[RMDB]
RNA sequence: GGGAACGACUCGAGUAGAGUCGAAAAAAUCUGUCAUGGAUAACCCAGUGGGAGGUCAGCCGCUAAGACGAUAACCUUGCUUCGGUUCUCCACACCAGCGGGACCGGUGCCUGGUACGAAUCCUGGGGACUAUGGAAUGGUUCGCCAUUCCAUAGUCAAAAGAAACAACAACAACAAC
Reactivity to 2A3 in 0.01 (KOAc 150mM, MgCl2 10mM, bicine 150mM(pH8.5), 24C), signal-to-noise 1, nucleotides 027 to 126: a000a030u060c080u030g100u090c020a110u120g000g020a050u010a090a130c000c020c030a000g100u080g050g030g020a060g040g020u040c050a020g030c070c000g000c060u090a040a090g020a090c050g050a060u050a050a020c000c000u020u050g000c040u190u080c010g000g000u060u040c000u050c020c030a060c020a050c000c030a010g030c030g010g000g010a010c020c050g070g030u010g010c000c000u020g010g000u030a090c030g030a050a010u000c000c010u020g040g000g110
Reactivity to DMS in 0.01 (KOAc 150mM, MgCl2 10mM, bicine 150mM(pH8.5), 24C), signal-to-noise 1, nucleotides 027 to 126: a040a070u000c040u000g000u010c180a120u020g000g000a030u010a150a110c070c010c010a110g000u000g000g030g030a090g010g010u000c030a120g000c010c010g010c110u000a030a100g000a060c070g000a110u000a060a030c020c040u000u000g000c020u000u000c070g010g010u000u020c070u000c060c030a130c070a070c230c130a060g000c060g040g000g000a060c070c020g000g010u000g000c090c010u000g010g000u000a080c150g000a110a070u020c020c000u000g000g000g000

Chemical mapping of a 177-nucleotide RNA with 2A3 and DMS. For 2A3, 889 sequencing reads were counted. Source: RMDB library RFMREP, as collected in RNAgym. The RNA was probed in 150 mM KOAc, 10 mM MgCl2 and 150 mM bicine (pH 8.5) at 24 C. 2A3 adducts were read by reverse transcription with SuperScript II with manganese.